About this RNA
Chemical mapping of a 177-nucleotide RNA with DMS and 2A3.
[RMDB]
RNA sequence: GGGAACGACUCGAGUAGAGUCGAAAAUCUAUUGCGUUCGCGCAAUAGAAAAUAAAAUCAGCGGUAAAUCGAGGCGUAAAAUUACCGCUGAACGCCACGAUAAAAUCAGAACCUUCGGGUUCUGAAACCCUCAUAUAACCUUCGGGUUAUAUGAGGGAAAAGAAACAACAACAACAAC
Reactivity to DMS in 0.01 (KOAc 150mM, MgCl2 10mM, bicine 150mM(pH8.5), 24C), signal-to-noise 1, nucleotides 027 to 126: u000c010u010a020u000u000g010c000g020u000u040c200g040c000g030c000a010a010u000a010g000a020a000a070a050u000a030a050a140a070u000c010a010g030c000g000g000u000a010a030a040u000c090g010a080g000g010c110g010u000a040a090a050a120u000u000a000c000c010g010c000u000g020a000a080c150g010c000c030a030c180g000a120u000a050a020a080a150u010c000a040g000a010a030c000c000u000u000c270g040g000g020u000u000c000u000g000a010a140a080
Reactivity to 2A3 in 0.01 (KOAc 150mM, MgCl2 10mM, bicine 150mM(pH8.5), 24C), signal-to-noise 3, nucleotides 027 to 126: u000c010u000a000u000u020g010c010g030u030u070c280g020c010g000c080a010a000u010a000g000a020a040a010a000u050a010a040a010a080u010c000a000g000c000g040g000u020a020a090a070u130c110g040a080g080g170c100g040u030a040a070a050a090u020u010a020c000c000g010c010u010g010a010a010c010g080c000c000a060c030g040a100u170a160a160a020a080u010c000a000g000a010a010c000c010u060u080c300g140g030g010u000u020c010u000g000a000a000a000

Overview: DMS adducts were read by reverse transcription with MarathonRT. The DMS profile rests on 1,038 reads. The 2A3 profile rests on 2,538 reads. Source: RMDB library M2PK50, as collected in RNAgym.